[RMDB]
RNA sequence: GGGAACGACUCGAGUAGAGUCGAAAAGUACUACCGUUCGCGGUAGUACAAAUAAUCCAGCCUGGAAAGGCUGGUGCCAAAACUAUGGUAAAGGCACCAUAGAAAGAGCAGAGUUCGCUCUGCUCAACGACGAGAUACAGUUCGCUGUAUCUCGUCGAAAAGAAACAACAACAACAAC
Reactivity to DMS in 0.01 (KOAc 150mM, MgCl2 10mM, bicine 150mM(pH8.5), 24C), signal-to-noise 2, nucleotides 027 to 126: g000u000a010c000u000a010c000c000g000u010u010c160g040c000g020g010u000a000g010u010a000c000a020a030a060u000a090a090u020c000c000a000g020c000c000u000g000g020a130a240a010g000g030c000u000g000g000u000g030c020c020a090a050a120a200c040u000a000u000g000g000u000a020a070a090g000g010c160a070c000c000a000u000a010g000a110a100a130g000a000g000c000a020g000a000g000u010u040c180g000c000u000c000u000g000c000u000c000a050a110
Reactivity to 2A3 in 0.01 (KOAc 150mM, MgCl2 10mM, bicine 150mM(pH8.5), 24C), signal-to-noise 2, nucleotides 027 to 126: g010u000a010c020u000a010c000c010g000u030u070c250g020c000g120g020u000a010g000u000a000c000a010a000a000u050a010a000u020c000c000a010g010c010c000u090g110g100a150a140a020g010g000c010u000g010g000u000g050c000c020a040a090a020a080c010u010a010u010g000g000u090a140a200a270g170g050c050a000c000c010a010u000a010g100a050a150a010g000a010g000c020a000g000a000g010u040u110c120g070c080u000c010u020g000c010u000c020a020a000
Chemical mapping of a 177-nucleotide RNA with DMS and 2A3. For DMS, 1,209 sequencing reads were counted. 2A3 adducts were read by reverse transcription with SuperScript II with manganese. For DMS the reverse transcriptase was MarathonRT. The data come from the RNA Mapping Database (RMDB), library M2PK50. DMS (dimethyl sulfate) methylates the pairing face of unpaired adenines and cytosines.